[RMDB]
RNA sequence: GGGAACGACUCGAGUAGAGUCGAAAAAGCAAGAUGAUUAAAUGAAGCGAUUAAACGUUCUAAGCGUGGAGGUAACGCUGGCAGUUCGAUCAACUUAUUAUUACUGACAUUAAGUUCUUCCAGUGAAGAUACUCGUUAUCUUCGGAUAACGAGUAUCAAAAGAAACAACAACAACAAC
Reactivity to DMS in 0.01 (KOAc 150mM, MgCl2 10mM, bicine 150mM(pH8.5), 24C), signal-to-noise 5, nucleotides 027 to 126: a090g010c060a050a140g000a070u000g010a100u000u010a030a060a060u000g010a090a060g020c150g010a060u000u000a050a070a070c040g010u000u010c090u010a080a070g010c040g020u000g000g020a140g000g010u000a070a070c040g000c040u010g000g010c170a080g000u000u000c040g000a040u000c040a050a180c040u000u000a040u000u000a070u010u010a110c150u010g000a090c080a050u000u000a020a160g000u000u000c050u000u010c000c050a120g000u010g010a080a120
Reactivity to 2A3 in 0.01 (KOAc 150mM, MgCl2 10mM, bicine 150mM(pH8.5), 24C), signal-to-noise 4, nucleotides 027 to 126: a000g080c070a050a030g010a050u120g010a050u130u160a070a050a060u120g100a050a000g000c020g020a000u010u160a080a080a030c020g020u110u050c110u180a120a010g000c010g030u040g010g080a050g000g060u090a050a000c010g000c000u000g000g030c000a030g010u070u090c040g030a040u000c020a010a040c030u080u080a030u090u040a050u070u130a140c080u060g060a000c000a050u080u110a090a020g020u050u000c010u050u000c020c020a070g020u040g140a040a050
The record gives the reactivity of an RNA of 177 nucleotides to DMS and 2A3. 2A3 adducts were read by reverse transcription with SuperScript II with manganese. Source: RMDB library OK2TRN, as collected in RNAgym. The RNA was probed in 150 mM KOAc, 10 mM MgCl2 and 150 mM bicine (pH 8.5) at 24 C.